[RMDB]
RNA sequence: GGGAACGACUCGAGUAGAGUCGAAAAACAGUGUGUGGAUGAGCUCGUGCCAUGCUUGCGUGGGAUGCCCCUCAACCAAUAGCUGGUAACUGCUUUGCAGCGGUGUGGUGCGAAACCAAGCAUGGGAGAUUACGACUGCAUUCGUGCAGUCGUAAUCAAAAGAAACAACAACAACAAC
Reactivity to DMS in 0.01 (KOAc 150mM, MgCl2 10mM, bicine 150mM(pH8.5), 24C), signal-to-noise 3, nucleotides 027 to 126: a100c040a100g000u010g030u010g030u000g010g010a080u000g020a110g000c050u000c050g010u000g000c010c000a010u000g010c000u000u000g000c270g020u020g010g000g000a220u020g000c000c020c010c020u010c110a150a070c040c020a070a150u010a150g000c100u000g030g000u010a140a130c020u000g010c030u000u000u010g020c150a040g040c090g000g000u010g020u000g020g020u010g010c030g010a080a140a030c010c010a010a080g010c000a010u000g000g000g000a070
Reactivity to 2A3 in 0.01 (KOAc 150mM, MgCl2 10mM, bicine 150mM(pH8.5), 24C), signal-to-noise 2, nucleotides 027 to 126: a000c050a040g050u070g000u020g020u050g100g030a050u060g040a060g040c010u020c060g110u060g000c000c000a010u020g000c000u040u010g000c090g110u050g060g060g030a190u200g030c000c000c000c030u040c040a040a050c000c000a030a160u090a120g050c090u000g030g000u060a090a060c020u050g060c050u090u040u130g050c020a010g010c030g000g000u060g030u040g040g010u050g000c010g010a020a010a000c010c000a000a000g010c010a000u000g000g040g000a110

Chemical mapping of a 177-nucleotide RNA with DMS and 2A3. The 2A3 profile rests on 1,764 reads. It was measured as part of the RMDB library OK2TST. The reactions ran in a buffer of 150 mM KOAc, 10 mM MgCl2 and 150 mM bicine (pH 8.5), at 24 C. For DMS the reverse transcriptase was MarathonRT.